About this RNA: Chemical mapping of a 207-nucleotide RNA with 2A3 and DMS. Values cover nucleotides 27 to 156. The data come from the RNA Mapping Database (RMDB), library OK3TST. The DMS profile rests on 4,528 reads. Conditions: 150 mM KOAc, 10 mM MgCl2 and 150 mM bicine (pH 8.5), 24 C.

RNA sequence: GGGAACGACUCGAGUAGAGUCGAAAAUUUUAGAAAGUAGGCAUUGCCUCCUUAUGUGAAAACUGCAUUCCUUUCAUGAGGGUUCCAUUUUCUGGAACACAGGAUGUAAGACAGGAGACAUAAGAAGGGAUCUUGUAGCAGUGCAGAUGAAUCAAGAUGAUUUAUCACUGUUCGCAGUGAUAAAUCAAAAAGAAACAACAACAACAAC
Reactivity to 2A3 in 0.01 (KOAc 150mM, MgCl2 10mM, bicine 150mM(pH8.5), 24C), signal-to-noise 3, nucleotides 027 to 156: u040u050u040u060a070g040a030a110a030g050u090a030g070g030c030a040u010u130g060c000c000u000c000c000u010u020a020u010g010u010g050a070a050a030a080c010u000g010c010a020u010u010c000c000u090u110u260c110a150u130g130a130g100g130g000u000u000c000c000a060u070u070u130u240c180u110g020g000a000a000c040a000c010a010g010g000a000u000g010u010a010a000g000a020c010a010g000g040a070g030a010c020a010u020a010a000g010a020a060g020g000g030a040u090c040u080u130g060u080a030g010c020a010g020u020g020c020a040g020a160u100g060a090a110u130c050a030a060g080a140
Reactivity to DMS in 0.01 (KOAc 150mM, MgCl2 10mM, bicine 150mM(pH8.5), 24C), signal-to-noise 3, nucleotides 027 to 156: u010u010u000u010a160g010a110a050a140g030u000a090g040g010c030a060u010u000g000c000c000u000c000c010u010u010a040u010g040u000g020a040a080a100a300c030u010g050c020a300u000u000c040c000u000u010u000c130a130u000g020a220g020g000g000u000u000c000c010a120u000u000u000u000c240u000g010g000a030a020c000a030c080a160g030g000a050u000g000u000a040a070g050a270c050a030g010g030a210g010a060c010a020u000a020a040g010a040a060g000g010g010a070u000c000u010u010g000u000a090g000c040a030g040u000g000c030a110g020a140u010g000a050a160u010c040a040a120g010a300